Source: RMDB library RFM100, as collected in RNAgym. Chemical mapping of a 177-nucleotide RNA with DMS and 2A3. The DMS profile rests on 1,188 reads. DMS (dimethyl sulfate) methylates the pairing face of unpaired adenines and cytosines.
[RMDB]
RNA sequence: GGGAACGACUCGAGUAGAGUCGAAAAAACACCCAAGCUUACUUUGUAGUUCCCUUGGCUCAUAGUCUGUGCUAGAGUAAUAGCUGCUCUUUUCCUCUGCAUUGGAAGGAAUAUCUAUCCUUUUAUACAAAUCUUAGCCGUUCGCGGCUAAGAUUUGAAAAGAAACAACAACAACAAC
Reactivity to DMS in 0.01 (KOAc 150mM, MgCl2 10mM, bicine 150mM(pH8.5), 24C), signal-to-noise 1, nucleotides 027 to 126: a000a090c300a150c050c000c000a030a120g030c120u000u000a070c090u000u010u000g000u040a070g030u000u030c000c000c050u040u000g000g000c090u020c010a100u090a010g000u000c050u000g020u010g000c010u000a010g000a070g040u000a050a020u000a020g000c070u000g010c020u000c010u010u000u000u000c000c040u000c060u000g000c190a150u040u020g000g000a090a000g000g020a050a050u090a100u100c130u000a090u010c000c020u010u000u020u000a130u010a300
Reactivity to 2A3 in 0.01 (KOAc 150mM, MgCl2 10mM, bicine 150mM(pH8.5), 24C), signal-to-noise 1, nucleotides 027 to 126: a000a000c060a040c000c000c030a040a010g020c020u150u160a010c060u170u070u060g020u060a000g010u000u050c000c000c020u000u070g090g000c000u000c040a060u020a180g030u030c070u000g050u110g030c020u030a050g000a000g180u070a050a050u060a080g000c010u010g020c000u000c000u000u000u090u050c050c020u080c000u020g000c060a110u030u160g060g050a000a000g020g080a030a080u100a070u090c030u020a170u040c000c000u000u020u000u000a150u000a020